[RMDB]
RNA sequence: GGGAACGACUCGAGUAGAGUCGAAAAGACAUUUGGUAUAUCAAAUGCAUAAGUUAACAAACUGAUAAUACCUACACCAGAGGCUAGACCAAUCAAUGCACUUAUAAUUGGUAAUCCUGCAGCAAUGACAACAGGUGCAUUUCGAUGCACCUGUUGUAAAAGAAACAACAACAACAAC
Reactivity to 2A3 in 0.01 (KOAc 150mM, MgCl2 10mM, bicine 150mM(pH8.5), 24C), signal-to-noise 1, nucleotides 027 to 126: g100a040c000a010u070u100u020g000g000u070a110u010a040u210c040a000a110a040u070g020c050a070u120a300a130g050u080u130a110a050c060a090a060a000c050u040g040a000u040a210a060u000a020c000c000u040a040c010a010c040c000a040g050a000g150g000c040u050a010g020a080c000c000a030a000u080c070a110a080u100g040c000a020c190u140u180a120u020a210a020u000u010g020g020u040a030a090u070c000c010u120g000c000a040g100c000a000a100u180g060
Reactivity to DMS in 0.01 (KOAc 150mM, MgCl2 10mM, bicine 150mM(pH8.5), 24C), signal-to-noise 1, nucleotides 027 to 126: g010a160c060a000u000u000u000g020g000u020a120u070a060u020c000a040a030a060u010g000c110a110u000a140a100g080u000u000a060a110c160a080a090a140c050u000g010a060u000a090a110u000a010c030c050u000a110c090a110c110c050a100g000a030g000g000c080u000a140g010a050c030c040a010a030u020c100a090a130u000g010c150a040c070u010u000a080u000a040a000u010u030g040g000u000a050a070u000c050c000u000g050c100a050g030c180a050a080u010g000